[RMDB]
RNA sequence: GGGAACGACUCGAGUAGAGUCGAAAAGUCUGCUAUAAUGUUUUUAACUUCUUCAAUAGAGAAGUUAUCUCCUUUGUGUUGUUUAUAAUAACAAAACAAAUUUUGCUCGAAGUACUAUGACUGUACCAGGAUAUAUGGUAUUCGUACCAUAUAUCCUAAAAGAAACAACAACAACAAC
Reactivity to 2A3 in 0.01 (KOAc 150mM, MgCl2 10mM, bicine 150mM(pH8.5), 24C), signal-to-noise 8, nucleotides 027 to 126: g050u030c050u050g040c030u070a050u060a200a170u140g060u040u080u000u010u020a020a020c000u010u000c000u090u080c070a170a270u190a240g020a000g010a020a000g000u020u000a020u000c090u020c000c030u020u040u010g020u020g010u030u030g030u040u040u020a230u050a170a090u130a040a010c020a020a060a010a010c030a030a090a090u110u180u120u100g070c050u040c080g050a110a010g040u030a050c050u040a070u210g070a040c040u030g030u050a020c000c010
Reactivity to DMS in 0.01 (KOAc 150mM, MgCl2 10mM, bicine 150mM(pH8.5), 24C), signal-to-noise 6, nucleotides 027 to 126: g010u010c030u000g000c090u010a080u010a110a070u010g000u010u000u010u000u000a000a010c000u000u000c000u000u000c040a110a120u030a220g000a000g000a020a010g010u000u000a010u010c070u000c040c070u000u010u010g010u000g000u000u010g010u000u010u000a060u010a130a060u010a030a030c020a020a030a030a060c030a020a040a090u010u010u020u010g010c070u000c080g000a080a120g010u000a040c080u000a070u010g010a070c120u000g000u000a090c050c140